[RMDB]
RNA sequence: GGGAACGACUCGAGUAGAGUCGAAAAAAUAGCAGGUAAGGAAAUAGUUAACUUGGUCACAGGAGAAAGAUUGGGGGUCAUUGGAGAAUGUGACCUUAUACUAGAUGAAACUACAGGCGGUAUAUUACGGAUAUAGGUCAUUCGUGACCUAUAUCCGAAAAGAAACAACAACAACAAC
Reactivity to DMS in 0.01 (KOAc 150mM, MgCl2 10mM, bicine 150mM(pH8.5), 24C), signal-to-noise 2, nucleotides 027 to 126: a090a090u000a070g030c020a000g010g000u000a100a040g030g000a060a050a070u010a030g000u010u000a060a130c140u010u000g030g030u020c010a040c070a010g040g000a100g000a060a100a040g010a050u010u000g040g000g000g000g050u030c040a060u000u000g020g040a100g000a140a070u020g000u010g000a050c010c000u000u010a020u050a020c030u050a050g010a080u000g000a090a100a090c070u010a010c100a040g050g010c000g010g000u010a020u040a090u010u010a220
Reactivity to 2A3 in 0.01 (KOAc 150mM, MgCl2 10mM, bicine 150mM(pH8.5), 24C), signal-to-noise 2, nucleotides 027 to 126: a000a000u200a020g030c040a010g000g020u220a100a010g040g100a040a010a180u090a050g030u120u070a080a040c010u030u040g050g030u030c020a010c020a050g020g070a160g080a090a110a010g060a020u010u090g050g030g000g000g030u030c050a090u030u080g140g010a140g090a130a050u040g000u020g000a010c000c000u000u040a170u050a040c000u000a000g040a080u140g140a100a090a010c030u060a000c020a020g060g050c020g000g110u000a050u000a020u090u110a070
Description
The record gives the reactivity of an RNA of 177 nucleotides to DMS and 2A3. Conditions: 150 mM KOAc, 10 mM MgCl2 and 150 mM bicine (pH 8.5), 24 C. For 2A3 the reverse transcriptase was SuperScript II with manganese. The 2A3 profile rests on 1,493 reads. DMS adducts were read by reverse transcription with MarathonRT. The data come from the RNA Mapping Database (RMDB), library OK1LIB. The DMS profile rests on 3,183 reads.